[RMDB]
RNA sequence: GGGAACGACUCGAGUAGAGUCGAAAAGACUUUGGUUCAGAAGGAAGAGCUAUGCUUGUUAGGGCCUCUUGUCUCCUCCCAGGAGUGGACAAGGUGGGUUAGGAGCAGUUUCUCCCUGAGUGGCUGCGUACCUGUUGUAGUUCGCUACAACAGGUACAAAAGAAACAACAACAACAAC
Reactivity to 2A3 in 0.01 (KOAc 150mM, MgCl2 10mM, bicine 150mM(pH8.5), 24C), signal-to-noise 3, nucleotides 027 to 126: g040a010c050u150u230u230g090g000u160u130c010a020g040a110a030g150g020a020a030g000a010g000c040u080a090u250g000c010u110u070g080u170u160a090g050g080g050c010c000u030c000u020u010g000u020c010u030c010c000u010c010c020c090a160g130g000a000g000u040g000g010a010c010a010a040g120g070u300g090g010g000u040u060a130g100g000a010g000c020a010g010u070u100u000c010u010c000c030c030u030g010a080g060u050g050g050c050u070g010c030
Reactivity to DMS in 0.01 (KOAc 150mM, MgCl2 10mM, bicine 150mM(pH8.5), 24C), signal-to-noise 4, nucleotides 027 to 126: g010a140c090u010u010u010g010g010u010u000c050a070g010a180a050g020g010a050a030g010a040g010c040u000a060u000g010c020u000u000g010u020u000a090g000g000g000c020c000u000c010u000u000g000u000c010u000c300c000u010c000c020c200a200g010g010a040g030u000g010g000a030c000a010a010g000g010u000g010g000g000u000u000a070g000g010a030g000c020a050g000u000u000u000c030u000c000c020c030u000g000a130g010u000g010g000c020u000g000c210
Chemical mapping of a 177-nucleotide RNA with 2A3 and DMS.
Conditions: 150 mM KOAc, 10 mM MgCl2 and 150 mM bicine (pH 8.5), 24 C.
For 2A3 the reverse transcriptase was SuperScript II with manganese.
For DMS, 6,092 sequencing reads were counted.
It was measured as part of the RMDB library OK2TRN.